Background:
The data come from the RNA Mapping Database (RMDB), library OK3TST. Structure probing data (2A3 and DMS) for a 207-nucleotide construct. For DMS, 9,437 sequencing reads were counted.

RNA sequence: GGGAACGACUCGAGUAGAGUCGAAAAUUAUGACGCAGUAACAUAGAUUAUUACCUUCUUGACUGUCGCUAAUAUCUAUAUACUUAUCGUUAUCGUAUUGGAUUCUACAUAUAGAUGGCUUGUAUGUCAAAGAUAUAGAACACAUAACCAAUUUAUACUAAUGAGUAUGCUUCGGCAUACUCAUUAGAAAAGAAACAACAACAACAAC
Reactivity to 2A3 in 0.01 (KOAc 150mM, MgCl2 10mM, bicine 150mM(pH8.5), 24C), signal-to-noise 8, nucleotides 027 to 156: u120u050a040u070g030a030c020g000c030a010g030u050a140a050c040a100u100a040g030a040u060u100a080u110u120a210c030c020u060u080c030u080u150g080a100c070u070g020u120c020g000c030u030a050a030u030a060u080c020u010a010u010a010u020a130c020u100u070a050u160c020g020u060u030a030u080c040g040u050a090u070u080g050g030a030u090u010c030u100a090c020a100u060a000u020a080g040a050u030g020g010c020u060u130g080u190a070u110g030u040c030a060a080a020g030a000u050a000u030a110g070a070a030c080a000c020a110u110a070a020c020c010a030a050u130u120u050a150u090a060
Reactivity to DMS in 0.01 (KOAc 150mM, MgCl2 10mM, bicine 150mM(pH8.5), 24C), signal-to-noise 4, nucleotides 027 to 156: u000u000a050u010g020a050c030g060c220a050g000u000a040a100c050a060u000a040g000a080u000u000a030u000u000a040c060c020u000u000c060u010u010g020a190c120u000g020u000c040g030c050u000a040a020u010a050u000c010u000a000u000a110u000a060c020u000u000a060u000c020g030u000u000a050u000c080g000u000a140u010u000g010g010a180u000u000c010u000a060c060a140u000a040u000a060g020a080u010g020g010c020u010u070g070u000a040u000g010u000c010a100a100a180g030a170u000a110u010a150g020a070a040c030a020c020a050u000a060a050c010c010a030a100u000u000u000a040u000a140
The RNA was probed in 150 mM KOAc, 10 mM MgCl2 and 150 mM bicine (pH 8.5) at 24 C. For DMS the reverse transcriptase was MarathonRT. As a SHAPE reagent, 2A3 marks flexible, mostly unpaired nucleotides at the ribose 2'-OH.